[RMDB]
RNA sequence: GGGAACGACUCGAGUAGAGUCGAAAAAGUGGGGGAAGCUCGCCAGGUAGACAUGGCUGCUCGUUUGGGAGUUUCGCAACCGACGGUGGCUAAAAUGCUUAAGCGACUGGCAACUAUGGGGCUGAUAUAAAAUCAUGCAGUUCGCUGCAUGAUUUUAAAAAGAAACAACAACAACAAC
Reactivity to DMS in 0.01 (KOAc 150mM, MgCl2 10mM, bicine 150mM(pH8.5), 24C), signal-to-noise 3, nucleotides 027 to 126: a110g010u010g000g030g000g010g000a110a040g020c040u000c090g020c030c020a050g010g020u000a060g010a140c120a130u000g000g020c010u000g020c010u020c050g020u010u000u020g020g000g000a300g010u020u000u010c170g020c110a030a260c030c020g000a030c060g020g020u000g000g020c010u000a040a070a110a060u010g000c040u000u000a060a110g000c060g020a050c030u000g000g010c060a100a090c090u010a090u000g020g000g000g000c050u000g000a080u000a060
This 177-nucleotide RNA was probed chemically with DMS. Values are in units of 0.01, from 0 to 300, in steps of 10.